[RMDB]
RNA sequence: GGGAACGACUCGAGUAGAGUCGAAAAUGUCAGGAGGGCGUGACAUGUUAGAGCCAUUAGUGUAUACCCCUGAUUCUUCAUUGCAGUCUGAGUUGCUCAGCUUUAUUUUGGAUCAUGUCUUCAUUGACUCAUGCCUGAGUUUCGACUCAGGCAUGAGAAAAGAAACAACAACAACAAC
Reactivity to DMS in 0.01 (KOAc 150mM, MgCl2 10mM, bicine 150mM(pH8.5), 24C), signal-to-noise 2, nucleotides 027 to 126: u020g020u000c010a050g020g010a050g010g020g020c030g010u000g000a040c020a010u010g010u020u010a050g010a050g010c020c100a130u000u000a120g000u010g020u000a090u010a110c050c020c020c100u000g010a070u000u000c050u000u010c270a110u020u000g000c130a020g010u000c010u020g010a050g010u010u000g000c040u010c090a090g000c040u000u000u000a020u000u010u000u020g010g000a120u010c040a020u000g000u000c030u010u000c050a100u010u000g010a200
Reactivity to 2A3 in 0.01 (KOAc 150mM, MgCl2 10mM, bicine 150mM(pH8.5), 24C), signal-to-noise 1, nucleotides 027 to 126: u130g030u030c010a030g050g040a040g060g010g000c040g040u000g000a000c000a060u030g070u080u060a050g000a000g010c030c000a060u010u100a060g020u080g010u070a150u100a170c010c010c000c000u010g030a060u040u070c000u050u050c050a190u130u120g030c080a030g040u060c010u000g010a010g110u080u090g070c010u020c030a020g000c000u050u060u000a050u120u100u080u040g050g000a060u000c000a060u030g000u030c000u010u030c040a210u000u110g040a040
Conditions: 150 mM KOAc, 10 mM MgCl2 and 150 mM bicine (pH 8.5), 24 C. Chemical mapping of a 177-nucleotide RNA with DMS and 2A3. As a SHAPE reagent, 2A3 marks flexible, mostly unpaired nucleotides at the ribose 2'-OH. For 2A3, 956 sequencing reads were counted. It was measured as part of the RMDB library OK2TST.